[RMDB]
RNA sequence: GGGAACGACUCGAGUAGAGUCGAAAAUACGAUAGUCAUGCGGACCCAAACCAAUUAGUCUGCAUCUAAUAACAUGGCUUAGACUAGAAGUUAGUGACUUCAAGCACUGAUGCCACGUUUUGGUUUGGCCCCACCACCAGUUCGCUGGUGGUGGGGCAAAAGAAACAACAACAACAAC
Reactivity to 2A3 in 0.01 (KOAc 150mM, MgCl2 10mM, bicine 150mM(pH8.5), 24C), signal-to-noise 1, nucleotides 027 to 126: u220a000c180g080a040u140a000g000u000c020a000u020g010c000g130g000a110c000c000c000a000a000a030c080c000a000a000u000u000a000g000u080c020u020g010c020a000u010c090u130a140a140u300a220a100c080a130u160g000g050c000u100u100a000g100a100c000u000a000g000a220a000g080u050u080a060g020u260g300a100c000u000u000c180a020a160g050c260a060c080u130g000a000u080g000c000c000a000c000g000u000u000u000u130g040g000u100u000u000g120